An RNA of 177 nucleotides, treated with 2A3 and read out base by base.
Values are in units of 0.01, from 0 to 300, in steps of 10.
As a SHAPE reagent, 2A3 marks flexible, mostly unpaired nucleotides at the ribose 2'-OH.
The reactions ran in a buffer of 150 mM KOAc, 10 mM MgCl2 and 150 mM bicine (pH 8.5), at 24 C.
Values cover nucleotides 27 to 126.
Source: RMDB library RFM100, as collected in RNAgym.
[RMDB]
RNA sequence: GGGAACGACUCGAGUAGAGUCGAAAAUAUAGAGGAUAUUUAUUCUAAGUUAAAACCUUUUCAAAUUAUAACCGCUACAAUUAUAAAUGAUUAAAGUGUUUCAACAUAUUAUAUAUAUUCCACGCUCACUUGAACGUUUAUUCGUAAACGUUCAAGUAAAAGAAACAACAACAACAAC
Reactivity to 2A3 in 0.01 (KOAc 150mM, MgCl2 10mM, bicine 150mM(pH8.5), 24C), signal-to-noise 2, nucleotides 027 to 126: u220a000u050a060g130a150g020g010a020u000a010u010u050u000a010u070u030c030u020a190a030g020u010u010a000a050a040a040c000c000u000u020u000u010c030a090a140a160u060u020a030u050a030a020c030c020g080c160u160a120c060a090a050u000u010a000u020a040a060a060u030g000a030u020u200a120a000a000g060u120g010u060u000u030c010a000a000c000a000u090a020u120u010a010u000a000u020a000u010a030u100u010c000c000a020c050g060c000u020c010